[RMDB]
RNA sequence: GGGAACGACUCGAGUAGAGUCGAAAAAUCUUGGCGAAGUCAGCGCGGAAGGAGCGCGCAACUCCUUACCCUCGGCUUUUUUUUUCCGCUCCCGUUCGCGAAAGCGUUCAGCGGAAAAGGGACCAAAGAUCAGAACUACUUUCGAGUAGUUCUGAUCAAAAGAAACAACAACAACAAC
Reactivity to DMS in 0.01 (KOAc 150mM, MgCl2 10mM, bicine 150mM(pH8.5), 24C), signal-to-noise 2, nucleotides 027 to 126: a060u000c060u010u000g000g010c060g000a020a040g010u000c020a110g010c090g000c180g010g010a060a000g000g020a030g020c030g010c280g000c160a080a070c010u000c010c000u000u000a130c010c030c020u000c050g000g000c000u000u000u000u000u000u000u000u000u000c000c000g010c030u000c110c040c020g010u000u000c000g010c020g000a090a080a170g000c000g020u000u000c010a040g010c000g000g000a010a000a010a020g020g010g000a170c010c030a050a060a110

Structure probing data (DMS) for a 177-nucleotide construct. For DMS, 2,001 sequencing reads were counted. The RNA was probed in 150 mM KOAc, 10 mM MgCl2 and 150 mM bicine (pH 8.5) at 24 C. In probing experiments dimethyl sulfate is read out at A N1 and C N3, which are open when not base-paired.